[RMDB]
RNA sequence: GGGAACGACUCGAGUAGAGUCGAAAAUCGUCGUACAGGGGUUUUACUCUUGAUGGAUUGCUAUCCAAUUUUAUUACUGACCUGUACGCUGAAGGUAAGGAUUGGAUAUGGCUAAAUUUAUUAAGAGCAAUUAUAUUUUCUUCGGAAAAUAUAAUUGAAAAGAAACAACAACAACAAC
Reactivity to DMS in 0.01 (KOAc 150mM, MgCl2 10mM, bicine 150mM(pH8.5), 24C), signal-to-noise 2, nucleotides 027 to 126: u040c040g000u010c020g010u000a020c040a040g000g000g010g020u010u010u010u020a070c010u010c000u000u010g000a000u000g000g000a010u010u010g000c040u020a000u000c010c000a020a000u000u010u020u050a050u030u000a040c030u010g000a120c030c020u000g010u010a020c030g020c100u010g000a100a190g000g020u020a030a010g010g000a010u010u000g000g010a040u000a040u040g010g020c100u040a040a050a030u000u000u010a000u000u000a000a000g000a020g010
Reactivity to 2A3 in 0.01 (KOAc 150mM, MgCl2 10mM, bicine 150mM(pH8.5), 24C), signal-to-noise 4, nucleotides 027 to 126: u070c000g030u000c010g010u020a010c010a040g000g000g000g000u000u050u030u090a040c010u000c000u000u000g010a000u010g010g010a010u000u130g020c010u030a000u000c000c000a000a000u010u040u050u100a180u030u060a040c020u060g120a170c010c010u030g020u050a030c040g000c040u070g060a110a040g040g000u010a050a040g160g030a020u000u010g000g000a000u020a050u120g050g000c060u170a150a030a080u030u020u020a010u010u010a010a000g000a000g000